Annotation: Structure probing data (2A3 and DMS) for a 177-nucleotide construct. The RNA was probed in 150 mM KOAc, 10 mM MgCl2 and 150 mM bicine (pH 8.5) at 24 C. It was measured as part of the RMDB library M2PK50. The DMS profile rests on 2,637 reads. 2A3 adducts were read by reverse transcription with SuperScript II with manganese.
[RMDB]
RNA sequence: GGGAACGACUCGAGUAGAGUCGAAAAGAGGAGUCAUUCGUGACUCCUCAAAGGGAGCUCAACUCUCCCGCUCAAGACCGAGAGCCUUCGGACCCAAAAGAAUGCUGUUCCUGUUCGCAGGAACAAAACCUAGGUUAAUCUUCGGAUUAACCUAGGUAAAAGAAACAACAACAACAAC
Reactivity to 2A3 in 0.01 (KOAc 150mM, MgCl2 10mM, bicine 150mM(pH8.5), 24C), signal-to-noise 3, nucleotides 027 to 126: g010a010g000g010a000g000u030c010a020u110u090c160g090u060g000a000c000u010c000c000u000c000a000a000a000g000g010g000a000g000c010u060c250a040a070c070u000c010u000c080c010c000g020c020u060c040a110a090g060a060c000c030g010a010g010a010g200c020c030u050u030c000g030g000a050c000c010c000a010a100a000a010g110a090a070u170g060c060u040g050u000u000c000c000u010g030u010u020c240g000c070a000g000g000a000a000c000a010a030a000
Reactivity to DMS in 0.01 (KOAc 150mM, MgCl2 10mM, bicine 150mM(pH8.5), 24C), signal-to-noise 3, nucleotides 027 to 126: g000a000g000g010a020g010u000c000a050u010u030c170g010u000g010a020c000u000c000c010u000c000a000a040a070g030g010g000a000g010c220u000c290a080a100c300u000c010u000c000c000c000g020c120u010c050a070a160g000a230c050c020g010a070g010a110g000c120c090u020u000c000g000g000a300c020c000c010a090a080a060a070g000a050a120u000g000c140u000g000u000u000c010c000u000g010u000u010c160g010c000a010g000g000a010a010c000a010a020a130